The record gives the reactivity of an RNA of 177 nucleotides to DMS. Conditions: 150 mM KOAc, 10 mM MgCl2 and 150 mM bicine (pH 8.5), 24 C. The DMS profile rests on 1,188 reads.
RNA sequence: GGGAACGACUCGAGUAGAGUCGAAAAGAUAUGGAGGGAUGGGAGCAACAGCCCUACCUCGGAAACGAGGUGAGGGACAUGCUUAGUCCCUCCUAAGUCAAAAGGAGGCCUCUUCGGAGGCCUCCAAGAUAUACAGGUUCUUCGGAACCUGUAUAUCAAAAGAAACAACAACAACAAC
Reactivity to DMS in 0.01 (KOAc 150mM, MgCl2 10mM, bicine 150mM(pH8.5), 24C), signal-to-noise 1, nucleotides 027 to 126: g000a020u010a120u010g020g010a030g030g000g010a030u010g020g060g010a000g020c020a110a030c190a140g010c000c010c010u000a030c000c000u000c000g000g000a040a040a110c000g030a000g000g000u010g000a030g020g040g000a020c070a180u010g040c030u000u010a300g020u000c000c000c000u000c000c000u000a010a020g010u010c010a100a050a090a090g020g000a030g020g030c020c010u000c000u000u010c220g010g000a010g010g000c010c000u000c000c000a010a010